[RMDB]
RNA sequence: GGGAACGACUCGAGUAGAGUCGAAAAAUCAGAUGGGAGCACCCCAUAUCACCGAAAAAAGGUCAUAGAGAACUUGGAGAAAUUCAUCACGCCCAUGAACACACAUGUUCACCACAUCUUGCGUCAGUGUCUGGAAACAGUGGAAGAUAGGGGUUGCUACCGUAGGUCUUUUCGAAGACCUACGGUAAAAAGAAACAACAACAACAAC
Reactivity to 2A3 in 0.01 (KOAc 150mM, MgCl2 10mM, bicine 150mM(pH8.5), 24C), signal-to-noise 2, nucleotides 027 to 156: a000u060c030a010g050a090u100g060g010g000a030g050c010a060c000c000c020c010a010u020a040u100c050a030c060c030g010a140a010a000a000a000a020g060g030u080c050a030u070a080g120a040g030a110a020c030u070u070g100g010a050g050a090a170a120u100u060c040a040u110c040a070c100g030c010c020c000a060u080g020a070a020c000a010c000a000c020a110u070g030u060u040c060a060c090c000a060c000a040u090c030u070u100g040c010g040u070c010a030g030u030g040u070c010u040g030g020a070a080a020c040a060g010u020g010g020a060a000g040a010u060a030g000g000g000g000u030u050g030c020
Reactivity to DMS in 0.01 (KOAc 150mM, MgCl2 10mM, bicine 150mM(pH8.5), 24C), signal-to-noise 2, nucleotides 027 to 156: a090u000c040a090g020a140u040g010g010g020a180g010c040a110c020c010c010c020a110u000a070u000c040a300c020c030g020a000a020a080a130a090a100g020g010u000c040a070u000a140g020a200g040a060a030c030u010u050g000g030a090g020a050a090a200u010u000c020a100u000c050a080c080g000c030c020c040a130u000g010a060a050c020a180c060a150c080a060u010g010u000u000c040a080c000c020a000c040a040u000c020u010u000g020c040g010u020c070a000g000u000g010u000c020u000g000g020a120a070a090c070a040g040u000g070g010a070a080g000a090u000a090g020g020g050g000u010u000g000c020